[RMDB]
The record gives the reactivity of an RNA of 177 nucleotides to 2A3 and DMS. For 2A3 the reverse transcriptase was SuperScript II with manganese. The DMS profile rests on 2,157 reads. Source: RMDB library OK2TST, as collected in RNAgym.
RNA sequence: GGGAACGACUCGAGUAGAGUCGAAAAGAGCGUGAAAAUAGAUCCAAAGAGAGGGGUCUUAUGCGCAGAAAUCCUUCUUAUGUUACCAAUAAAACGCCAGAACCAACUUCUACUUCCGAGUGGAAGAUAUCCAGUACUUUUUCGAAAGUACUGGAUAAAAAGAAACAACAACAACAAC
Reactivity to 2A3 in 0.01 (KOAc 150mM, MgCl2 10mM, bicine 150mM(pH8.5), 24C), signal-to-noise 2, nucleotides 027 to 126: g030a040g010c000g000u020g040a040a000a000a060u080a030g020a040u000c030c020a050a150a020g110a030g010a020g020g020g000g010u000c000u040u050a110u110g060c110g010c000a000g080a020a050a010u030c000c000u030u050c010u040u090a100u150g060u030u070a070c050c010a100a110u070a120a110a020a000c020g010c010c020a010g040a090a030c020c000a040a050c010u010u000c010u020a010c000u080u000c050c160g110a010g020u050g000g010a010a000g000a020
Reactivity to DMS in 0.01 (KOAc 150mM, MgCl2 10mM, bicine 150mM(pH8.5), 24C), signal-to-noise 3, nucleotides 027 to 126: g000a190g000c020g050u000g000a100a040a110a130u000a040g010a100u000c100c030a030a120a300g010a090g010a070g010g020g010g000u000c020u010u000a030u000g000c140g000c110a120g000a050a050a050u010c000c010u000u000c010u000u000a130u000g000u000u000a060c100c050a070a070u000a050a050a170a040c060g010c020c030a080g000a100a190c060c040a120a180c040u000u000c000u000a020c010u000u000c160c120g010a060g010u000g010g020a030a000g000a190